Record summary: Chemical mapping of a 207-nucleotide RNA with DMS and 2A3. For DMS the reverse transcriptase was MarathonRT. Source: RMDB library OK3TST, as collected in RNAgym. For DMS, 2,029 sequencing reads were counted. The RNA was probed in 150 mM KOAc, 10 mM MgCl2 and 150 mM bicine (pH 8.5) at 24 C.

RNA sequence: GGGAACGACUCGAGUAGAGUCGAAAAGAAGCACAACUUCCUCACCCCUUAGAAGGGAAGAAGCUGCCAAUACCAUGUAUGUACUUGAUGCGAGAAGCUUACCUAAGAAGCGAAUAGGAGAAGACACAUUGUGAAGACAAGUCCAGAAAUACGACCACGGCUGACGAUACUUCGGUAUCGUCAGCCGAAAAGAAACAACAACAACAAC
Reactivity to DMS in 0.01 (KOAc 150mM, MgCl2 10mM, bicine 150mM(pH8.5), 24C), signal-to-noise 1, nucleotides 027 to 156: g010a140a100g020c050a050c110a050a050c020u000u000c000c020u000c180a220c090c000c000c020u000u000a140g000a120a190g030g050g030a060a060g010a050a020g020c040u000g040c040c010a130a220u010a170c040c040a050u010g010u000a080u010g050u000a000c030u010u010g010a100u000g020c000g000a160g000a040a020g000c020u000u000a080c020c060u000a080a070g010a080a030g030c000g000a030a040u000a030g030g020a140g020a060a070g020a030c060a030c020a080u010u000g030u000g000a010a050g010a050c100a080a140g000u000c030c010a140g000a080a010a110u000a080c020g000a100c000c020a140
Reactivity to 2A3 in 0.01 (KOAc 150mM, MgCl2 10mM, bicine 150mM(pH8.5), 24C), signal-to-noise 2, nucleotides 027 to 156: g030a010a030g050c050a010c010a030a080c020u020u010c010c000u080c040a120c000c030c000c000u090u070a090g010a190a060g100g000g010a010a010g000a000a000g030c030u030g020c010c020a020a060u050a070c010c060a020u070g020u030a040u070g060u020a070c000u030u070g060a090u060g090c000g010a040g030a120a040g000c000u070u030a040c000c000u050a140a060g020a070a010g100c040g060a060a090u090a070g030g030a030g020a050a050g060a030c010a000c010a060u030u040g010u020g030a030a020g010a040c020a080a030g010u000c010c020a000g080a020a100a010u170a080c120g000a020c010c000a020